Overview: An RNA of 207 nucleotides, treated with 2A3 and DMS and read out base by base. For DMS, 1,394 sequencing reads were counted. For 2A3 the reverse transcriptase was SuperScript II with manganese. For 2A3, 700 sequencing reads were counted.

RNA sequence: GGGAACGACUCGAGUAGAGUCGAAAAGGUAUGAUUAGGGUGAGACCUAGGAACCGUAGGGGUAUUCUCAAAGGAAGCUUUUGCAGUGACGCCCAUGUAAGUGGGAUAUAACAACAGAUCUCGUAUGUGUGGCACAGAGAGUUCGCUCUCUGUGCAACCUAGACUUCAGCUUCGGCUGAAGUCUAGGAAAAGAAACAACAACAACAAC
Reactivity to 2A3 in 0.01 (KOAc 150mM, MgCl2 10mM, bicine 150mM(pH8.5), 24C), signal-to-noise 1, nucleotides 027 to 156: g040g010u120a050u150g100a100u130u070a060g060g000g000u040g070a080g030a040c020c020u060a090g090g040a050a090c080c020g020u060a020g000g010g000g000u010a080u070u020c030u010c040a030a030a040g040g000a060a050g040c030u000u100u080u050g040c060a010g000u010g020a050c070g040c010c020c000a010u070g070u130a060a050g000u020g040g000g000a030u020a000u000a050a050c100a000a010c000a020g120a110u030c080u040c070g030u080a070u190g090u000g010u080g040g000c000a000c000a000g000a000g000a020g020u040u030c160g020c080u000c010u000c000u000g000u000g010c000a000a010
Reactivity to DMS in 0.01 (KOAc 150mM, MgCl2 10mM, bicine 150mM(pH8.5), 24C), signal-to-noise 1, nucleotides 027 to 156: g030g020u000a110u000g000a150u000u000a090g000g010g030u000g020a160g010a070c030c000u000a130g070g030a030a030c080c020g040u020a090g000g000g030g050u020a100u000u000c000u010c030a030a090a090g020g020a050a120g050c030u000u000u000u000g000c080a090g010u000g000a150c050g010c010c000c010a060u000g010u000a090a100g000u010g000g000g060a060u000a090u000a120a130c100a050a150c060a140g030a120u010c070u000c040g030u010a090u000g010u010g000u010g020g020c010a030c000a020g030a020g010a020g010u000u020c300g040c030u000c000u000c000u000g050u000g040c010a040a000